The record gives the reactivity of an RNA of 177 nucleotides to 2A3 and DMS. The 2A3 profile rests on 3,272 reads. Source: RMDB library OK1LIB, as collected in RNAgym.

[RMDB]
RNA sequence: GGGAACGACUCGAGUAGAGUCGAAAAUUUACAGAUGGUUGCCCGUGUGUACGGCUGUCCAAUCUUUGACGCGCAUGAGGUAAUGUUCUAUCGUCAUUACGCUGCCGUGCAGUCUGAUGGGACCCACGCUGACCUUAGUAUUCGUACUAAGGUCAGCAAAAGAAACAACAACAACAAC
Reactivity to 2A3 in 0.01 (KOAc 150mM, MgCl2 10mM, bicine 150mM(pH8.5), 24C), signal-to-noise 5, nucleotides 027 to 126: u110u110u100a070c040a020g150a090u110g080g040u060u100g050c000c000c000g010u040g020u040g030u050a030c020g000g000c030u050g070u020c020c050a080a110u000c070u130u100u160g020a030c010g040c000g000c040a040u100g030a030g030g060u060a060a040u040g060u110u070c080u150a140u180c060g110u020c010a000u000u030a030c110g000c110u050g010c040c010g020u020g000c000a010g030u020c020u100g070a070u060g010g020g030a010c000c010c020a020c030
Reactivity to DMS in 0.01 (KOAc 150mM, MgCl2 10mM, bicine 150mM(pH8.5), 24C), signal-to-noise 2, nucleotides 027 to 126: u020u000u020a070c170a050g020a070u010g000g030u010u030g020c020c020c030g020u000g000u010g040u010a060c130g000g000c010u000g000u000c060c020a070a120u030c110u000u000u020g020a050c000g030c100g020c050a030u000g000a100g020g000u010a040a040u000g010u020u010c050u020a110u010c150g020u030c020a000u020u020a000c040g000c000u010g020c050c030g010u010g000c000a110g010u000c060u060g000a120u010g020g000g000a130c010c000c050a090c230